[RMDB]
Chemical mapping of a 207-nucleotide RNA with DMS and 2A3. The reactions ran in a buffer of 150 mM KOAc, 10 mM MgCl2 and 150 mM bicine (pH 8.5), at 24 C. The data come from the RNA Mapping Database (RMDB), library M2RFPK. For 2A3 the reverse transcriptase was SuperScript II with manganese. The 2A3 profile rests on 1,038 reads.
RNA sequence: GGGAACGACUCGAGUAGAGUCGAAAAGCUCUGUAAUGGGAUGGGAUCCGAAGCCCCAAUGAGGGAUAAUACAGGCUCUCCCAUCCAACUCCUAUUCCAACACGUCCUCGUCGUACAGAGUGGUAACUAAGGUAUAGCUCCUUCGGGAGCUAUACAAUCAAUUAUACGGGUUCGCCCGUAUAAUUGAAAAAGAAACAACAACAACAAC
Reactivity to DMS in 0.01 (KOAc 150mM, MgCl2 10mM, bicine 150mM(pH8.5), 24C), signal-to-noise 2, nucleotides 027 to 156: g000c040u000c010u010g000u000a050a090u000g020g020g030a020u020g000g020g050a060u000c020c010g050a130a160g000c000c000c000c020a110a140u020g010a150g020g010g000a100u000a090a150u010a100c050a290g010g030c060u010c080u000c000c010c000a050u000c020c020a060a040c050u000c010c000u010a110u000u000c000c020a080a190c080a110c060g000u000c050c010u010c000g000u010c030g000u000a060c020a040g020a030g040u000g020g010u010a060a180c070u000a060a120g030g030u010a020u000a000g000c000u010c000c020u000u020c300g070g020g000a010g000c000u000a000u000a000c000a050a180
Reactivity to 2A3 in 0.01 (KOAc 150mM, MgCl2 10mM, bicine 150mM(pH8.5), 24C), signal-to-noise 2, nucleotides 027 to 156: g030c020u020c040u010g040u020a020a230u170g140g000g030a000u000g000g000g010a040u090c010c000g040a040a020g050c010c030c000c120a100a130u260g000a270g040g010g000a020u110a180a090u140a160c130a040g000g000c010u010c000u000c000c000c010a010u040c000c000a000a000c010u010c000c000u030a060u070u110c040c000a070a040c020a070c110g040u060c030c050u110c020g110u040c020g000u050a010c010a000g010a020g000u050g000g070u070a080a070c100u010a160a000g070g000u000a000u010a000g000c010u000c010c020u060u110c190g030g000g030a000g010c000u000a000u000a000c000a000a000